[RMDB]
The record gives the reactivity of an RNA of 207 nucleotides to 2A3 and DMS.
The data come from the RNA Mapping Database (RMDB), library OK3TST.
For 2A3 the reverse transcriptase was SuperScript II with manganese.

RNA sequence: GGGAACGACUCGAGUAGAGUCGAAAAUCAUACGUCAUGGCCGGGUGCCCUCAUGUGCAGCACGUCCGGCUCUCCUGCUGGCCAGUUCGCCUCGCGGUGGGUGGUGCUCCAGCCCAAGUCGGCGUAGAACGGCUCCAGGAACUCGAAGCAGGUCAGACGUAUACUGAACUUUCGAGUUCAGUAUACGAAAAGAAACAACAACAACAAC
Reactivity to 2A3 in 0.01 (KOAc 150mM, MgCl2 10mM, bicine 150mM(pH8.5), 24C), signal-to-noise 4, nucleotides 027 to 156: u110c020a040u040a210c070g050u040c070a120u130g050g000c010c010g000g020g000u020g000c020c040c020u130c080a190u210g050u170g170c090a040g020c030a040c020g120u050c030c010g000g000c010u010c000u000c000c000u010g020c010u020g010g010c010c010a060g010u040u030c040g010c030c010u050c040g040c040g060g040u060g030g010g000u070g000g050u120g060c020u040c010c030a090g000c020c020c010a070a050g100u160c050g060g030c030g040u040a070g020a070a000c020g000g000c010u020c030c020a060g060g040a040a020c030u050c060g060a060a020g040c060a030g000g060u060c030a010g010a070
Reactivity to DMS in 0.01 (KOAc 150mM, MgCl2 10mM, bicine 150mM(pH8.5), 24C), signal-to-noise 2, nucleotides 027 to 156: u010c050a100u010a030c070g000u000c040a120u010g020g060c000c040g000g010g020u000g000c040c050c010u050c110a090u000g030u010g020c100a070g020c050a080c030g020u000c000c020g040g000c000u000c090u020c020c020u000g000c020u000g000g020c010c030a070g020u000u000c030g020c030c020u000c050g060c090g040g040u000g020g010g050u020g040g040u000g030c030u000c000c020a300g030c010c010c020a070a120g020u000c080g010g030c060g030u000a090g010a070a060c030g010g040c000u000c150c010a140g000g000a060a050c020u010c030g010a060a050g010c040a060g000g020u000c070a100g020a240